This 177-nucleotide RNA was probed chemically with DMS. The DMS profile rests on 3,797 reads.

RNA sequence: GGGAACGACUCGAGUAGAGUCGAAAAGAUAUGGACGUCUGAGGAGCGAUAAGCUGGUGUCGGAAACGACACUCAGCUUUUGACGCUCGUAGGACGUCCUAAGUCAAAAGCUCACUUCGGUGAGCAAUCUUUAUUUGCUGUUCGCAGCAAAUAAAGAAAAAGAAACAACAACAACAAC
Reactivity to DMS in 0.01 (KOAc 150mM, MgCl2 10mM, bicine 150mM(pH8.5), 24C), signal-to-noise 4, nucleotides 027 to 126: g010a030u000a300u020g010g000a020c010g000u000c000u000g020a300g000g000a010g040c000g020a180u000a000a020g010c000u010g010g020u000g010u000c000g040g010a120a060a240c020g040a020c010a020c000u020c010a010g000c000u000u000u010u000g030a220c080g030c010u010c000g000u000a300g020g000a010c000g010u000c010c020u010a010a110g010u000c050a090a110a160a150g010c000u000c020a010c010u000u010c170g040g010u010g000a020g000c000a030a010